[RMDB]
This 177-nucleotide RNA was probed chemically with DMS and 2A3. For DMS, 17,253 sequencing reads were counted. The data come from the RNA Mapping Database (RMDB), library OK1LIB.

RNA sequence: GGGAACGACUCGAGUAGAGUCGAAAAUGACGUGCAGGUGUCACGCCUCAUUUUAGUGGCAGUAAGUCAAAAGUGGGUGCUCAACCUGUACAAGCCUACUUUAAGGAGACCACUAUGGCGCGGACUGCAGCUAUGGAUUAUUCGUAAUCCAUAGCUGAAAAGAAACAACAACAACAAC
Reactivity to DMS in 0.01 (KOAc 150mM, MgCl2 10mM, bicine 150mM(pH8.5), 24C), signal-to-noise 7, nucleotides 027 to 126: u010g010a080c110g010u000g010c010a030g000g020u020g020u030c140a150c120g000c020c020u010c080a070u010u000u020u000a050g020u000g010g010c030a170g000u040a110a110g020u020c020a070a020a020a020g030u000g000g010g010u020g010c090u000c200a110a070c070c010u000g000u020a020c060a100a170g000c010c000u000a040c110u000u010u030a130a110g010g000a070g010a130c020c010a020c050u000a040u020g000g010c070g000c070g000g000a090c050u000g000
Reactivity to 2A3 in 0.01 (KOAc 150mM, MgCl2 10mM, bicine 150mM(pH8.5), 24C), signal-to-noise 9, nucleotides 027 to 126: u130g040a030c060g000u020g000c010a010g020g030u050g040u090c030a020c100g020c010c000u090c050a090u020u050u030u100a100g020u030g040g000c080a080g110u280a200a040g030u090c020a010a030a010a000g010u010g000g010g010u150g020c020u030c090a060a060c020c010u030g010u020a010c010a010a010g000c000c000u040a070c030u090u070u080a080a060g100g010a040g040a050c000c000a030c030u040a070u100g020g000c040g000c040g030g020a040c030u050g010